[RMDB]
This 177-nucleotide RNA was probed chemically with 2A3 and DMS.
RNA sequence: GGGAACGACUCGAGUAGAGUCGAAAAGAAAGAAAGAAAAUCAAAUGAUGAAAUACCAAUGCAACAGAGUCAAGCUCUGAGUUUCAAAAAGAAACAUGGACGAGAUUGCUUUUUUAUUACUGACCAACAUGUGGAAUACCUUCGGGUAUUCCACAUGAAAAGAAACAACAACAACAAC
Reactivity to 2A3 in 0.01 (KOAc 150mM, MgCl2 10mM, bicine 150mM(pH8.5), 24C), signal-to-noise 4, nucleotides 027 to 126: g070a010a030a000g050a020a000a040g050a060a190a000a030u070c050a080a100a100u160g070a080u130g090a110a050a060u120a080c010c020a030a030u080g050c020a110a130c000a060g040a010g050u150c090a070a030g010c010u000c010u010g060a040g020u020u000u010c120a180a180a060a050a020g000a000a020a030c040a010u080g030g000a010c050g030a010g000a060u000u040g020c000u050u010u040u000u010u010a070u080u140a070c040u040g100a050c010c010a030a080
Reactivity to DMS in 0.01 (KOAc 150mM, MgCl2 10mM, bicine 150mM(pH8.5), 24C), signal-to-noise 2, nucleotides 027 to 126: g010a180a050a030g000a050a040a030g030a100a040a060a040u000c030a050a130a080u000g000a080u010g000a070a100a130u040a090c060c030a050a020u040g000c180a120a130c090a000g000a030g020u020c130a030a070g010c010u000c000u010g000a050g030u000u000u010c040a070a100a040a150a120g000a020a010a030c000a080u000g020g000a150c130g000a070g050a010u020u000g000c030u000u000u060u000u000u000a030u050u000a090c100u010g010a120c030c040a060a240